RNA sequence: GGGAACGACUCGAGUAGAGUCGAAAAGUUUGAGAGUUUACUCCCGUGAGGAAGCAUCUAUUUAUCGCUGCGAGAUAAAAUAUGUCCUUUAUUCCCGCUCCUGAAUUUUGUUUCUUGCGCGAUGAUGCAUUAGCUAUUGUUUCGACAAUAGCUAAUGAAAAGAAACAACAACAACAAC
Reactivity to DMS in 0.01 (KOAc 150mM, MgCl2 10mM, bicine 150mM(pH8.5), 24C), signal-to-noise 9, nucleotides 027 to 126: g010u010u010u010g010a100g010a110g020u000u010u000a090c080u000c020c010c030g010u010g010a090g000g010a100a090g020c040a050u000c050u010a090u020u010u010a040u000c010g010c030u020g030c030g000a050g000a060u010a040a040a060a070u010a060u010g010u010c020c020u000u010u010a120u030u000c020c000c020g020c070u000c020c020u010g010a070a070u010u010u000u000g000u010u000u000c010u000u000g010c040g010c020g000a040u010g000a050u000g010
Reactivity to 2A3 in 0.01 (KOAc 150mM, MgCl2 10mM, bicine 150mM(pH8.5), 24C), signal-to-noise 9, nucleotides 027 to 126: g060u090u130u160g120a120g010a020g010u040u100u120a080c020u020c000c010c010g030u070g030a060g010g070a060a020g040c010a020u020c020u100a180u070u130u050a040u030c030g010c070u090g030c060g020a070g020a050u090a060a070a030a020u150a060u080g050u050c000c000u050u070u040a070u080u020c010c000c000g000c020u030c010c020u070g070a150a130u060u070u050u060g040u020u040u000c000u010u040g030c070g000c040g120a130u100g030a060u120g030
Description
An RNA of 177 nucleotides, treated with DMS and 2A3 and read out base by base. DMS adducts were read by reverse transcription with MarathonRT. High 2A3 reactivity points to a flexible backbone, as in loops and unpaired stretches. For 2A3 the reverse transcriptase was SuperScript II with manganese.